[RMDB]
RNA sequence: GGGAACGACUCGAGUAGAGUCGAAAAGCACUAAUGGUCAUGCUGUACCGACUCUCUUUAGACUUAAGGGAGGUGCACCUGUAAAAAAAGUAGCCUUUGGCGGUGAUCAAGUACAUGAGGUUGCUGCGGAUUGUAUAUCGUUCGCGAUAUACAAUCCAAAAGAAACAACAACAACAAC
Reactivity to 2A3 in 0.01 (KOAc 150mM, MgCl2 10mM, bicine 150mM(pH8.5), 24C), signal-to-noise 2, nucleotides 027 to 126: g000c000a000c060u120a070a050u160g030g020u050c000a050u120g110c050u090g050u070a010c000c010g040a020c000u000c000u010c000u010u070u050a140g050a230c030u140u060a010a010g010g000g000a040g030g030u010g000c000a030c020c000u020g090u170a060a080a000a000a000a000a040g060u000a030g040c000c000u000u000u070g020g040c000g000g030u050g030a060u090c050a090a020g020u060a110c030a100u110g010a010g020g020u050u010g000c020u040g060c070
Reactivity to DMS in 0.01 (KOAc 150mM, MgCl2 10mM, bicine 150mM(pH8.5), 24C), signal-to-noise 2, nucleotides 027 to 126: g010c010a040c030u000a110a070u010g000g010u000c050a120u020g030c120u000g010u020a090c070c010g010a240c020u000c010u000c020u000u000u010a090g010a120c260u000u000a040a040g000g010g000a040g000g010u000g020c030a050c000c010u010g020u000a000a000a090a070a070a080a030g010u010a040g010c010c020u000u000u000g020g000c000g010g010u000g010a080u000c140a070a100g000u000a040c060a080u010g010a070g010g000u000u010g010c000u010g020c190
The record gives the reactivity of an RNA of 177 nucleotides to 2A3 and DMS. For 2A3, 1,555 sequencing reads were counted. The reactions ran in a buffer of 150 mM KOAc, 10 mM MgCl2 and 150 mM bicine (pH 8.5), at 24 C. For DMS, 1,728 sequencing reads were counted. The data come from the RNA Mapping Database (RMDB), library 15KREP. Reactivities are given for positions 27 through 126.